[RMDB]
Source information: The data come from the RNA Mapping Database (RMDB), library PDB130. This 207-nucleotide RNA was probed chemically with DMS and 2A3. For DMS the reverse transcriptase was MarathonRT. Values cover nucleotides 27 to 156. The DMS profile rests on 7,317 reads.

RNA sequence: GGGAACGACUCGAGUAGAGUCGAAAAUUAUAACAAAGAAGUAACACGUAAAGUGUGUAUCAAUCGAGUUUCUGACCUAUCAGCUUUUGAUGUUAGGGUAUUGGCCUAACAUGGCUAUGACGGGUAACGGGGAAUUAGAGUUCGAUUCCGGAGAGGGGAACUAAAUGUACUUCGGUACAUUUAGUUCAAAAGAAACAACAACAACAAC
Reactivity to DMS in 0.01 (KOAc 150mM, MgCl2 10mM, bicine 150mM(pH8.5), 24C), signal-to-noise 3, nucleotides 027 to 156: u010u000a050u010a090a170c050a100a100a130g000a100a130g010u000a090a060c030a030c030g020u000a090a090a180g040u000g020u000g010u010a110u000c060a060a100u000c030g020a140g000u000u000u000c030u000g010a070c010c020u000a040u000c000a010g000c040u020u010u020u020g020a050u010g020u000u010a010g010g030g000u010a110u000u010g030g000c010c000u000a010a030c030a030u000g020g000c020u000a110u010g020a010c000g010g020g000u010a060a100c060g010g000g010g020a060a080u000u000a080g010a080g020u000u000c030g000a150u000u010c030c040g020g020a130g020a120g010g020g010
Reactivity to 2A3 in 0.01 (KOAc 150mM, MgCl2 10mM, bicine 150mM(pH8.5), 24C), signal-to-noise 6, nucleotides 027 to 156: u050u020a070u060a120a030c030a060a090a040g080a070a010g090u120a060a000c010a000c030g090u140a150a130a120g020u040g000u010g020u050a070u140c080a080a070u060c060g020a020g040u020u080u040c040u060g070a040c000c000u010a040u110c020a010g010c020u100u230u300u300g090a020u030g000u020u020a000g010g000g030u130a180u130u220g090g040c000c000u010a010a010c000a030u030g020g000c020u040a060u250g020a020c020g000g010g020u010a040a040c040g010g000g000g060a020a020u050u050a110g010a010g060u040u080c030g020a060u090u000c030c030g010g010a030g020a020g010g030g020
The reactions ran in a buffer of 150 mM KOAc, 10 mM MgCl2 and 150 mM bicine (pH 8.5), at 24 C.